[RMDB]
RNA sequence: GGGAACGACUCGAGUAGAGUCGAAAAGUGACGCAGCGACGGCCCGCCCGGGCUUCCGGGGCAUCACCCGGUCGGCGCGGUCGCGGCGCGCCGAGGGCCCGACGCCUGGCGGAGAAUCAGGGUUCGAAACUACCAGGUAAUUCGUUACCUGGUAGUUAAAAGAAACAACAACAACAAC
Reactivity to DMS in 0.01 (KOAc 150mM, MgCl2 10mM, bicine 150mM(pH8.5), 24C), signal-to-noise 5, nucleotides 027 to 126: g010u010g010a080c030g010c020a040g000c020g000a060c040g000g000c040c020c030g010c070c020c010g000g010g010c110u020u020c040c020g010g000g010g010c100a070u020c190a260c000c010c010g000g010u020c030g000g000c130g040c020g000g010u010c040g010c030g000g010c040g000c030g030c030c000g010a140g000g010g010c000c000c020g000a080c170g000c020c030u000g010g020c010g000g000a090g010a090a070u020c070a070g000g000g010u020u000c050g020a110
Reactivity to 2A3 in 0.01 (KOAc 150mM, MgCl2 10mM, bicine 150mM(pH8.5), 24C), signal-to-noise 2, nucleotides 027 to 126: g050u030g040a050c030g000c040a010g020c020g040a030c020g110g000c000c000c000g000c010c020c010g000g010g000c020u070u020c030c030g010g000g030g000c040a130u140c030a090c010c000c000g020g020u010c000g030g000c090g000c010g080g000u040c030g020c020g040g020c000g000c000g000c000c000g010a080g030g040g020c000c030c010g030a010c030g020c000c000u030g030g040c030g020g030a060g050a060a060u100c060a040g060g010g020u060u090c020g030a000
Chemical mapping of a 177-nucleotide RNA with DMS and 2A3. DMS (dimethyl sulfate) methylates the pairing face of unpaired adenines and cytosines. Source: RMDB libraries RFM100 and RFMREP, as collected in RNAgym. Conditions: 150 mM KOAc, 10 mM MgCl2 and 150 mM bicine (pH 8.5), 24 C. For DMS the reverse transcriptase was MarathonRT.